[RMDB]
Chemical mapping of a 177-nucleotide RNA with DMS and 2A3. For DMS, 1,913 sequencing reads were counted. The 2A3 profile rests on 1,055 reads. High 2A3 reactivity points to a flexible backbone, as in loops and unpaired stretches. Conditions: 150 mM KOAc, 10 mM MgCl2 and 150 mM bicine (pH 8.5), 24 C. It was measured as part of the RMDB library OK1LIB.
RNA sequence: GGGAACGACUCGAGUAGAGUCGAAAAGAAGAGAGUAGAAGAUGGCCGACAUGGUCCCAGCCCCUCGCUGGCGCCGGCUGGGCAACACCAUUGCACUCCGGUGGCGUAUGGUGCAAGAGAGAAAGAAGCCAUACUAGCCAUUCGUGGCUAGUAUGGCAAAAGAAACAACAACAACAAC
Reactivity to DMS in 0.01 (KOAc 150mM, MgCl2 10mM, bicine 150mM(pH8.5), 24C), signal-to-noise 2, nucleotides 027 to 126: g000a080a120g000a040g000a090g090u000a010g000a020a060g000a050u000g000g020c020c030g000a040c130a170u000g010g000u020c070c000c000a030g000c000c060c050c070u060c040g000c060u000g000g000c140g020c050c080g020g000c050u020g010g010g040c080a130a110c050a150c080c050a100u000u000g000c000a030c040u000c080c070g000g000u000g000g030c100g000u030a000u020g010g000u000g010c060a130a020g000a150g030a100g010a050a100a080g010a130a170
Reactivity to 2A3 in 0.01 (KOAc 150mM, MgCl2 10mM, bicine 150mM(pH8.5), 24C), signal-to-noise 2, nucleotides 027 to 126: g070a060a010g040a000g010a010g050u120a000g010a070a020g070a090u120g010g000c000c010g090a140c070a130u130g050g000u080c000c000c000a030g010c010c000c000c030u050c020g000c020u020g100g020c020g000c010c000g000g000c080u000g000g030g000c000a000a080c030a000c090c000a030u080u080g000c070a040c000u000c020c070g030g040u010g080g050c020g000u060a060u030g010g000u030g000c000a060a000g030a040g000a000g080a020a170a000g090a140a050